[RMDB]
Chemical mapping of a 177-nucleotide RNA with DMS and 2A3. Conditions: 150 mM KOAc, 10 mM MgCl2 and 150 mM bicine (pH 8.5), 24 C. For 2A3 the reverse transcriptase was SuperScript II with manganese.
RNA sequence: GGGAACGACUCGAGUAGAGUCGAAAAUGGUCAAGGAACUCACCGGCGGCAAGGAACCCAACAAGGGCGUCAACCCCGAUGAGGUUGUCGCGGUGGGAGCCGCUCUGCAGGCCGGCGUCCUCAAGGGAGCUAUCUUCCUCUUCGGAGGAAGAUAGCUAAAAGAAACAACAACAACAAC
Reactivity to DMS in 0.01 (KOAc 150mM, MgCl2 10mM, bicine 150mM(pH8.5), 24C), signal-to-noise 1, nucleotides 027 to 126: u020g030g010u000c040a110a040g000g010a020a000c050u050c080a140c000c040g070g030c000g020g000c000a070a060g000g040a050a100c060c000c000a080a050c200a050a250g040g030g020c100g020u000c140a060a090c100c000c030c180g000a120u030g000a190g000g000u000u000g000u020c050g000c000g000g000u000g050g030g010a050g000c000c020g040c270u030c030u010g010c100a150g080g000c000c000g010g000c140g000u010c000c000u000c010a040a050g000g000g010
Reactivity to 2A3 in 0.01 (KOAc 150mM, MgCl2 10mM, bicine 150mM(pH8.5), 24C), signal-to-noise 3, nucleotides 027 to 126: u080g050g000u140c120a070a060g000g010a070a060c030u050c050a030c030c030g090g000c010g010g000c030a000a130g090g020a110a100c000c050c000a040a050c120a080a130g150g010g040c020g130u100c060a030a110c000c000c000c040g060a090u200g110a100g020g060u010u030g040u000c010g010c030g000g010u090g000g000g000a000g000c000c030g020c020u050c070u120g000c070a010g080g000c010c000g000g000c000g020u020c010c020u060c020a050a120g050g030g000